[RMDB]
RNA sequence: GGGAACGACUCGAGUAGAGUCGAAAAGUUACUGUCGAGUACAACAUUCAUGCUGUAUUAGACACACUACUUGCUUCUUCUAGUCUUAGAACCUUUGUUGUAGAUAAGUCUUUGUCAAUUGAGGAGUACGUACAUAUAUCUUCGGAUAUAUGUACGUAAAAGAAACAACAACAACAAC
Reactivity to DMS in 0.01 (KOAc 150mM, MgCl2 10mM, bicine 150mM(pH8.5), 24C), signal-to-noise 8, nucleotides 027 to 126: g010u000u000a090c210u000g010u000c010g000a100g000u000a000c010a010a000c010a070u000u010c300a110u000g020c010u000g010u000a010u000u000a270g010a020c000a020c130a110c150u000a030c020u000u000g010c130u000u000c030u000u000c050u000a070g000u000c030u000u000a070g010a080a140c050c040u000u000u000g020u000u000g010u000a060g010a080u010a060a080g010u000c050u000u000u000g010u000c080a060a110u000u000g000a070g010g010a100g010u000
Reactivity to 2A3 in 0.01 (KOAc 150mM, MgCl2 10mM, bicine 150mM(pH8.5), 24C), signal-to-noise 7, nucleotides 027 to 126: g020u010u030a040c040u040g010u010c010g010a010g020u010a000c000a020a010c010a040u070u300c050a050u160g000c010u000g010u010a010u020u020a020g000a000c000a000c030a010c030u070a020c010u000u040g050c000u020u020c000u060u010c020u040a030g070u000c030u080u040a050g020a110a080c010c010u070u050u050g080u070u060g040u050a030g030a140u060a060a070g050u010c010u030u080u080g130u060c050a100a140u070u160g020a040g020g020a030g050u010
This 177-nucleotide RNA was probed chemically with DMS and 2A3. The RNA was probed in 150 mM KOAc, 10 mM MgCl2 and 150 mM bicine (pH 8.5) at 24 C.